Chemical mapping of a 177-nucleotide RNA with DMS and 2A3. Reactivities are given for positions 27 through 126. High DMS reactivity at an A or C suggests that its Watson-Crick edge is free.

[RMDB]
RNA sequence: GGGAACGACUCGAGUAGAGUCGAAAAGGACCUCACUCCUGCGAGACAGGAGUAAUCCUAAACAGGGUUUUCACCCUUCCUUUAGUUUCCUUCCUCUCCUGGAGAGGUCUUCUGCCCUAGCCCGGUCGACAAAAGAUAUCUUCGGAUAUCUUUUGUCAAAAGAAACAACAACAACAAC
Reactivity to DMS in 0.01 (KOAc 150mM, MgCl2 10mM, bicine 150mM(pH8.5), 24C), signal-to-noise 4, nucleotides 027 to 126: g000g000a020c020c020u000c180a140c130u000c000c000u000g000c170g000a040g010a050c180a020g000g010a020g010u000a010a010u000c160c000u000a000a010a030c180a010g000g010g000u000u010u010u010c180a080c000c000c000u000u000c030c010u000u000u000a000g010u000u000u000c010c010u010u000c030c040u000c010u000c000c010u000g000g000a040g010a040g000g000u000c000u000u000c050u000g010c010c010c010u000a110g000c030c020c020g020g010u010c160
Reactivity to 2A3 in 0.01 (KOAc 150mM, MgCl2 10mM, bicine 150mM(pH8.5), 24C), signal-to-noise 4, nucleotides 027 to 126: g010g010a010c010c000u040c050a110c070u010c000c010u020g020c130g050a040g000a040c230a150g010g000a000g000u010a000a010u010c010c000u020a050a030a050c300a130g020g030g000u080u090u270u300c130a040c000c000c000u010u010c010c000u010u000u010a000g000u000u030u000c010c000u020u060c010c010u010c000u000c010c000u010g000g010a000g000a000g030g010u000c000u020u010c010u030g000c000c000c000u050a080g030c020c000c020g070g130u100c100
The reactions ran in a buffer of 150 mM KOAc, 10 mM MgCl2 and 150 mM bicine (pH 8.5), at 24 C.